RNA sequence: GGGAACGACUCGAGUAGAGUCGAAAACUUUGUGCCGCCCAAGAUGCGGUUCAGAAGCAAGGUGUGGCACCCCAACGUGAGCAGCGCCAAUGGGGCGAUCUGUUUGGACAUUCUGAAGGACCAGUGGAAGUCACCUUAGGUUCGCCUAAGGUGACUUAAAAGAAACAACAACAACAAC
Reactivity to DMS in 0.01 (KOAc 150mM, MgCl2 10mM, bicine 150mM(pH8.5), 24C), signal-to-noise 1, nucleotides 027 to 126: c110u010u000u000g020u000g000c020c000g010c020c010c070a110a100g000a150u010g000c050g010g020u000u000c080a060g020a040a120g040c080a100a120g000g020u000g010u000g000g000c070a060c040c020c030c040a080a180c170g020u000g000a040g000c010a030g000c020g000c010c010a130a110u000g010g000g010g000c030g010a060u000c000u000g010u000u020u010g010g000a070c170a080u000u000c060u000g010a040a060g000g020a080c050c010a060g020u000g000g000